[RMDB]
The data come from the RNA Mapping Database (RMDB), library OK1LIB. Chemical mapping of a 177-nucleotide RNA with 2A3. For 2A3, 349 sequencing reads were counted.
RNA sequence: GGGAACGACUCGAGUAGAGUCGAAAACUUUCAGUUUACUGCCGGUAGUUUGCUGAAGUCUCAGUAGUGCUCUAGCGAGCUACGAUGAGUCGUUUUGCCGCAAGCGGUGACGGGAAGGUUGUGGCAAGUGCGCAGGAGUGUUCGCACUCCUGCGCACAAAAGAAACAACAACAACAAC
Reactivity to 2A3 in 0.01 (KOAc 150mM, MgCl2 10mM, bicine 150mM(pH8.5), 24C), signal-to-noise 1, nucleotides 027 to 126: c040u120u170u040c000a070g000u000u000u160a000c000u020g100c010c050g150g000u060a180g000u000u200u000g090c000u000g000a120a000g000u070c000u000c090a300g020u300a090g060u080g030c000u000c000u000a050g070c000g060a030g020c000u040a040c060g060a160u170g000a000g000u000c030g030u000u000u030u000g060c000c000g030c130a050a120g050c090g080g020u000g030a060c010g030g040g100a130a140g000g000u000u050g000u020g020g000c060a000a070